Structure probing data (2A3 and DMS) for a 207-nucleotide construct. For 2A3 the reverse transcriptase was SuperScript II with manganese. For DMS, 2,026 sequencing reads were counted. The reactions ran in a buffer of 150 mM KOAc, 10 mM MgCl2 and 150 mM bicine (pH 8.5), at 24 C. DMS adducts were read by reverse transcription with MarathonRT. The 2A3 profile rests on 720 reads.
RNA sequence: GGGAACGACUCGAGUAGAGUCGAAAAGACAAGAUCUCCUUCUCUCCAACGUUGUUGCCAACUCAUGAUUCUCCUAACCUGUGCUUGGAGAGACGUGGACCCAGAGUCAGCGGACCUCUGACUUCCAAAAACCCGUUUCGGUUCGCCGAAACGGGAACUUUAAUUUUGAGUUCGCUCAAAAUUAAAGAAAAGAAACAACAACAACAAC
Reactivity to 2A3 in 0.01 (KOAc 150mM, MgCl2 10mM, bicine 150mM(pH8.5), 24C), signal-to-noise 1, nucleotides 027 to 156: g040a010c040a070a070g050a240u020c040u020c020c000u040u000c020u000c000u000c010c060a080a030c080g020u010u040g050u080u080g050c020c050a050a020c090u080c110a110u110g060a210u170u000c040u050c050c050u080a100a100c020c120u140g040u090g080c070u000u020g000g000a020g000a000g000a050c080g040u050g030g000a040c000c000c040a040g020a020g030u020c010a000g040c030g060g060a040c000c020u000c010u010g050a040c000u030u050c040c000a020a160a100a140a200c000c000c000g010u010u000u000c000g000g000u010u010c130g000c070c000g000a000a000a010c010g020g000g020a000a000
Reactivity to DMS in 0.01 (KOAc 150mM, MgCl2 10mM, bicine 150mM(pH8.5), 24C), signal-to-noise 1, nucleotides 027 to 156: g000a080c060a140a080g030a300u010c020u000c020c020u000u000c010u020c010u010c000c030a030a140c080g000u000u010g020u000u000g000c000c090a030a130c020u030c050a090u000g010a190u010u000c000u010c030c010u000a070a080c030c030u020g040u010g030c070u000u000g000g010a060g020a050g060a070c080g070u010g000g000a050c050c060c040a070g000a050g000u010c030a040g000c020g030g020a160c050c000u000c040u000g010a130c020u030u010c000c020a040a070a110a080a140c000c000c030g010u000u000u000c000g080g020u000u000c300g020c000c010g020a010a010a040c010g000g050g020a000a000